An RNA of 177 nucleotides, treated with 2A3 and read out base by base. The 2A3 profile rests on 376 reads. The reactions ran in a buffer of 150 mM KOAc, 10 mM MgCl2 and 150 mM bicine (pH 8.5), at 24 C.
[RMDB]
RNA sequence: GGGAACGACUCGAGUAGAGUCGAAAAUGCAAGAAGCUGCUUCCUUGGAGGCCUAUUCUCAACACCCCUUAGGGGAGGCUAUUGUCCGUGCUGCUCAGGAAGCUGGUUAUGAUAGUCUACCAGUGGAGCCGGUGGACUGGUUCGCCAGUCCACCGGCAAAAGAAACAACAACAACAAC
Reactivity to 2A3 in 0.01 (KOAc 150mM, MgCl2 10mM, bicine 150mM(pH8.5), 24C), signal-to-noise 1, nucleotides 027 to 126: u060g000c000a080a000g090a020a080g130c000u080g040c000u130u040c000c000u000u160g120g000a020g010g040c000c000u110a260u150u130c040u000c000a180a180c230a100c000c000c000c020u020u130a020g060g000g030g060a000g000g000c000u080a090u040u030g000u070c030c070g080u000g000c000u000g000c000u000c190a090g110g070a040a000g020c090u030g000g040u160u290a040u130g000a000u000a000g000u000c000u030a000c000c000a010g000u000g100g060a030